[RMDB]
RNA sequence: GGGAACGACUCGAGUAGAGUCGAAAAUGGCGGUCCUUGGCAUAUUGGUUCCAAAUCCGGCCAGAAGGGUGCCUGGCUGUGUCGCAUUUGGCAUGGGGGUGUCCCAUAGCGGGUAGGUGCAUUUUGGCGAUAAAUAAAAAUUCGUUUUUAUUUAUCGAAAAGAAACAACAACAACAAC
Reactivity to DMS in 0.01 (KOAc 150mM, MgCl2 10mM, bicine 150mM(pH8.5), 24C), signal-to-noise 8, nucleotides 027 to 126: u020g000g020c030g020g010u010c030c020u010u010g010g010c070a090u030a100u020u020g000g000u010u010c020c010a040a070a080u020c060c030g010g000c000c020a050g000a100a090g010g000g010u010g000c040c020u010g010g010c020u000g000u010g010u010c060g000c160a100u020u030u020g000g000c050a060u000g000g000g010g000g010u010g010u010c020c010c010a070u010a070g010c040g000g000g010u010a040g000g020u000g010c070a100u010u010u010u010g010g010
Reactivity to 2A3 in 0.01 (KOAc 150mM, MgCl2 10mM, bicine 150mM(pH8.5), 24C), signal-to-noise 8, nucleotides 027 to 126: u080g030g010c010g010g030u050c030c000u020u060g040g000c030a030u050a140u150u180g050g000u090u040c020c000a000a010a030u020c010c000g050g000c020c000a020g030a060a050g040g020g010u040g020c010c010u020g040g000c030u020g020u020g040u090c030g010c100a120u040u070u230g030g000c020a020u030g010g000g000g010g020u050g040u040c000c000c010a020u050a020g020c030g000g000g010u020a010g010g020u020g010c030a040u020u030u050u100g050g020